[RMDB]
RNA sequence: GGGAACGACUCGAGUAGAGUCGAAAAACGUCCUCCGCUCCUGUGGUCUUUCCCUAUGAGGACCCAUCACUUCCGUUGGAUGAGAGGGCCAGGGAUCUGGUCUCCCGUAUGAGUCUUGAGGAAAAGGCCUGGAGUGUAGUUUCGACUACACUCCAGGAAAAGAAACAACAACAACAAC
Reactivity to 2A3 in 0.01 (KOAc 150mM, MgCl2 10mM, bicine 150mM(pH8.5), 24C), signal-to-noise 2, nucleotides 027 to 126: a000c010g050u020c000c020u020c010c020g060c010u020c000c020u090g090u110g060g010u000c000u000u030u000c000c000c000u060a170u160g140a070g000g050a070c000c000c030a070u040c020a020c070u050u050c020c070g290u110u080g020g050a040u040g020a060g050a030g120g050g020c000c010a000g040g030g070a190u110c010u010g000g020u070c040u050c070c020c000g010u200a080u110g030a020g020u000c060u150u000g070a110g000g050a000a050a000a060g070g000
Reactivity to DMS in 0.01 (KOAc 150mM, MgCl2 10mM, bicine 150mM(pH8.5), 24C), signal-to-noise 1, nucleotides 027 to 126: a160c170g010u000c050c000u000c060c140g020c070u000c060c070u010g050u010g030g000u000c030u000u000u010c000c030c020u000a080u000g030a080g010g000a040c030c050c000a050u010c010a270c080u000u000c030c030g010u010u000g020g010a040u010g020a150g030a110g040g010g000c030c020a020g010g030g010a060u010c010u000g010g010u000c010u000c010c020c020g010u010a020u000g010a050g000u000c030u010u000g020a100g000g010a030a040a030a100g000g000